[RMDB]
RNA sequence: GGGAACGACUCGAGUAGAGUCGAAAAGUGGUCUGCAGCGACGACGAACAGUACCGGUUGACCGUGGUGCCCGGCAGGAAGUCAUAGCCGAGCGCGACGGCGACGACACGGGCGAUGUUGAAACCGGUCCCACUCAAUCGUUCGCGAUUGAGUGGGAAAAAGAAACAACAACAACAAC
Reactivity to DMS in 0.01 (KOAc 150mM, MgCl2 10mM, bicine 150mM(pH8.5), 24C), signal-to-noise 1, nucleotides 027 to 126: g050u020g000g000u000c000u000g020c090a080g040c140g000a060c070g010a060c050g000a080a070c210a110g000u000a050c050c000g000g010u000u000g020a100c000c000g010u010g010g020u000g000c070c000c000g010g070c050a140g020g000a160a180g010u010c110a100u030a230g000c000c000g000a020g000c000g010c000g000a050c000g000g040c000g020a080c130g000a020c040a040c030g030g000g000c020g000a130u000g010u010u000g100a080a050a050c040c010g030g000

Record summary: The record gives the reactivity of an RNA of 177 nucleotides to DMS. The data come from the RNA Mapping Database (RMDB), library OK2TRN. For DMS, 964 sequencing reads were counted. Conditions: 150 mM KOAc, 10 mM MgCl2 and 150 mM bicine (pH 8.5), 24 C.